[RMDB]
RNA sequence: GGGAACGACUCGAGUAGAGUCGAAAAGAUAUGGAUCAAAGGGAGAACGAUAAUCGGAAACGAUUACGUUCGAAGAACUUUGAGUCCUAAGUCAAAACCACUUCCCACGUUCGCGUGGGAAGUGGAAGUCAUUACACCUCUUCGGAGGUGUAAUGACAAAAGAAACAACAACAACAAC
Reactivity to DMS in 0.01 (KOAc 150mM, MgCl2 10mM, bicine 150mM(pH8.5), 24C), signal-to-noise 1, nucleotides 027 to 126: g020a010u000a020u020g000g000a180u000c000a020a010a030g000g010g000a030g020a000a020c000g000a190u010a000a000u010c000g020g010a020a000a020c010g000a000u000u000a000c000g010u000u000c000g030a100a110g000a100a220c010u010u010u000g020a030g000u000c000c000u000a020a070g000u000c000a080a010a100a150c000c000a010c010u000u000c000c000c000a000c000g000u000u010c190g020c010g060u000g000g000g000a000a000g020u000g000g000a020a030
Reactivity to 2A3 in 0.01 (KOAc 150mM, MgCl2 10mM, bicine 150mM(pH8.5), 24C), signal-to-noise 1, nucleotides 027 to 126: g000a010u020a000u040g000g010a000u010c010a010a000a000g000g000g000a080g000a010a000c020g190a300u010a020a010u000c000g000g000a010a000a010c010g000a000u000u030a010c010g030u020u000c020g050a020a000g000a000a000c020u020u010u010g020a030g250u130c000c010u000a000a000g000u020c000a000a010a000a200c010c010a000c000u000u000c000c020c010a010c000g040u040u090c300g000c000g160u000g000g000g000a000a000g000u000g010g010a020a000